[RMDB]
RNA sequence: GGGAACGACUCGAGUAGAGUCGAAAAAAGUUGAUGUGGAUUUACUCCGAGGAGACGAACUACCACGAACAGGGGGAACUCUACCCGUGGCGUCUCCGUUUGACGAGUAAGUCCUAAGUCAACACAAUCUACAUUAACUGUUCGCAGUUAAUGUAGAAAAAGAAACAACAACAACAAC
Reactivity to 2A3 in 0.01 (KOAc 150mM, MgCl2 10mM, bicine 150mM(pH8.5), 24C), signal-to-noise 2, nucleotides 027 to 126: a000a010g010u010u000g010a010u030g000u030g010g010a010u010u000u000a000c000u000c010c010g020a040g000g000a000g020a000c020g000a030a030c070u150a050c060c010a010c020g030a070a020c030a130g030g000g010g000g010a030a060c010u010c010u050a040c010c020c010g000u000g000g010c000g000u000c000u000c000c010g000u050u030u070g010a010c010g000a000g000u000a000a010g000u000c000c000u000a030a000g010u000c000a000a010c010a010c010a030a080
Reactivity to DMS in 0.01 (KOAc 150mM, MgCl2 10mM, bicine 150mM(pH8.5), 24C), signal-to-noise 4, nucleotides 027 to 126: a090a090g010u000u010g020a020u000g000u000g000g000a020u000u000u000a020c000u000c000c020g010a100g010g010a030g000a030c010g010a050a070c110u020a300c010c010a010c010g010a040a280c180a010g020g010g000g010g010a100a120c010u000c010u000a130c180c070c010g010u000g020g000c020g010u000c000u000c010c000g000u010u000u010g010a150c300g000a030g000u000a020a010g010u000c000c000u010a020a070g000u000c000a000a000c020a100c140a070a070
Source information:
Conditions: 150 mM KOAc, 10 mM MgCl2 and 150 mM bicine (pH 8.5), 24 C. The record gives the reactivity of an RNA of 177 nucleotides to 2A3 and DMS. For DMS, 2,987 sequencing reads were counted. For 2A3, 6,534 sequencing reads were counted.